[RMDB]
The record gives the reactivity of an RNA of 177 nucleotides to DMS. Values cover nucleotides 27 to 126.
RNA sequence: GGGAACGACUCGAGUAGAGUCGAAAAAGAUAUGGAGAGUCUCUAGCGUGGGCAUCGAUCAUACCCAAGAUGAGUAUAUCGGAAACGAUAUAUUGAGAGUAUGGGAGCCUCGGGCUCUCCUAAGUCACCGUAUGACAAUCUUCGGAUUGUCAUACGGAAAAGAAACAACAACAACAAC
Reactivity to DMS in 0.01 (KOAc 150mM, MgCl2 10mM, bicine 150mM(pH8.5), 24C), signal-to-noise 1, nucleotides 027 to 126: a190g010a010u000a040u020g000g000a000g000a030g010u000c000u000c300u000a260g040c060g040u000g020g040g020c010a300u000c250g000a020u010c020a010u000a010c000c070c070a090a220g000a140u000g010a050g000u000a000u000a020u000c000g010g000a020a040a010c000g010a040u010a020u000a010u000u000g000a140g020a270g000u000a010u000g010g010g000a030g030c000c000u000c030g000g000g030c000u000c000u000c000c000u000a000a040g000u010c030a240